The record gives the reactivity of an RNA of 177 nucleotides to 2A3 and DMS. High 2A3 reactivity points to a flexible backbone, as in loops and unpaired stretches. In probing experiments dimethyl sulfate is read out at A N1 and C N3, which are open when not base-paired. DMS adducts were read by reverse transcription with MarathonRT. Values cover nucleotides 27 to 126.

RNA sequence: GGGAACGACUCGAGUAGAGUCGAAAAAUGAGUGCUAUCGCCCUUACCGUCAGUAUGUUGGCGCUGGUCGCCGUAUUGGGGUUAUGGAUCGGUAAUUGGAAAAUCUAUGGUGUGGGGUUAGGUAUCACGAAAAUCAGUAUUUCGAUACUGAUUUUCGAAAAGAAACAACAACAACAAC
Reactivity to 2A3 in 0.01 (KOAc 150mM, MgCl2 10mM, bicine 150mM(pH8.5), 24C), signal-to-noise 3, nucleotides 027 to 126: a000u140g010a040g020u060g010c010u030a030u110c020g010c010c000c000u010u040a020c010c020g170u070c020a030g010u050a080u110g190u200u130g050g000c010g000c030u050g090g040u170c020g020c010c010g010u020a060u030u060g030g010g010g000u040u070a070u110g040g010a040u060c040g030g050u090a100a100u090u090g070g020a070a060a010a050u040c060u050a080u150g000g030u050g040u050g040g010g000g000u010u030a030g000g020u040a020u150c050a020
Reactivity to DMS in 0.01 (KOAc 150mM, MgCl2 10mM, bicine 150mM(pH8.5), 24C), signal-to-noise 7, nucleotides 027 to 126: a090u010g000a090g020u000g010c060u000a050u000c070g010c100c010c020u000u000a050c040c040g010u000c070a050g010u000a030u000g010u010u010g020g010c010g020c060u010g020g020u010c020g010c020c020g020u000a030u000u000g010g010g010g010u000u000a060u000g010g010a050u000c050g000g010u000a050a100u000u010g010g000a090a080a070a060u010c070u010a090u000g010g010u000g020u000g010g010g000g010u000u000a050g010g010u000a060u000c110a150